[RMDB]
RNA sequence: GGGAACGACUCGAGUAGAGUCGAAAACGGAUUAGGCGUGGAGGCGAAAGCCACCCUCCUCGCAUCGCAAGUUCGUGCUUGCGACUUACACGUAGGGCGAGGGGUGGGCGAAAGUUGCCAUGAGACCAAAAUAUGUAGUUCUUCGGAACUACAUAAACCCCAACUGAUAAUUCGUUAUCAGUUGGGGAAAAGAAACAACAACAACAAC
Reactivity to DMS in 0.01 (KOAc 150mM, MgCl2 10mM, bicine 150mM(pH8.5), 24C), signal-to-noise 2, nucleotides 027 to 156: c040g000g000a150u000u000a050g020g020c020g040u000g000g000a060g000g010c020g020a080a140a190g000c010c010a060c000c010c000u000c000c030u000c050g010c100a150u000c020g030c010a040a030g010u000u000c220g030u010g000c030u010u010g010c010g000a020c020u010u000a120c130a110c160g000u000a100g010g010g000c020g020a010g000g000g030g020u000g010g030g030c010g000a060a120a220g020u010u000g010c000c060a060u000g010a150g000a080c030c020a060a030a070a210u000a020u000g010u000a000g010u000u010c000u010u010c290g030g010a040a000c010u010a000c000a000u000a030a080a170
Reactivity to 2A3 in 0.01 (KOAc 150mM, MgCl2 10mM, bicine 150mM(pH8.5), 24C), signal-to-noise 6, nucleotides 027 to 156: c040g050g020a120u110u150a100g010g050c030g010u020g020g010a030g000g020c040g030a080a030a000g010c000c000a080c030c010c010u080c000c010u000c000g000c010a020u010c000g000c000a010a000g010u190u270c120g140u300g080c010u000u010g000c000g010a010c010u040u090a060c120a020c130g170u200a130g040g120g000c020g000a020g000g000g030g120u070g010g040g000c010g030a090a040a020g050u060u040g020c010c020a020u030g040a020g030a090c020c040a020a060a010a040u070a000u020g000u000a000g000u010u000c000u010u010c130g060g010a000a000c000u000a000c000a000u000a010a000a000
Chemical mapping of a 207-nucleotide RNA with DMS and 2A3. The data come from the RNA Mapping Database (RMDB), library M2RFPK. Reactivities are given for positions 27 through 156. The 2A3 profile rests on 5,773 reads.